Description: Structure probing data (2A3 and DMS) for a 177-nucleotide construct. For 2A3 the reverse transcriptase was SuperScript II with manganese. For DMS, 3,487 sequencing reads were counted. 2A3 is a SHAPE reagent: it acylates the 2'-hydroxyl of flexible nucleotides of all four kinds. It was measured as part of the RMDB library OK2TST. Reactivities are given for positions 27 through 126. For DMS the reverse transcriptase was MarathonRT. The 2A3 profile rests on 2,075 reads. The reactions ran in a buffer of 150 mM KOAc, 10 mM MgCl2 and 150 mM bicine (pH 8.5), at 24 C.
RNA sequence: GGGAACGACUCGAGUAGAGUCGAAAAAUUCUGUAUUAGAAGCAAAACAAGCAACGAAUUGUCGCGCAACAAUGAUAUUUGUCCCUCCUGCUUAUGCUGCAGAAGCGAUAAUUGAAGCUGAGGAUGCAGCGUUCAUGUAAUUCGUUACAUGAACGCUAAAAGAAACAACAACAACAAC
Reactivity to 2A3 in 0.01 (KOAc 150mM, MgCl2 10mM, bicine 150mM(pH8.5), 24C), signal-to-noise 3, nucleotides 027 to 126: a000u050u000c030u070g040u020a100u020u140a100g090a140a000g000c030a000a020a020a150c010a050a010g020c020a030a070c050g140a040a050u020u030g020u020c000g020c010g040c040a010a010c020a030a130u090g150a080u050a120u260u070u110g110u110c020c010c000u010c010c000u000g030c020u140u110a080u230g040c020u040g000c030a000g040a090a000g020c020g010a020u040a050a050u020u030g040a030a000g000c000u000g000a000g100g020a040u050g040c010
Reactivity to DMS in 0.01 (KOAc 150mM, MgCl2 10mM, bicine 150mM(pH8.5), 24C), signal-to-noise 4, nucleotides 027 to 126: a170u000u000c030u000g010u000a090u000u000a090g010a060a090g020c060a030a030a090a080c130a130a030g030c030a040a210c140g000a030a050u000u010g010u000c010g030c100g010c110a040a050c050a040a030u000g010a160u010a130u010u000u000g000u000c020c010c020u000c050c020u000g010c030u000u000a060u010g020c140u000g000c020a030g000a050a060g030c050g000a040u000a010a050u000u000g000a080a220g010c020u000g010a090g010g010a150u000g030c040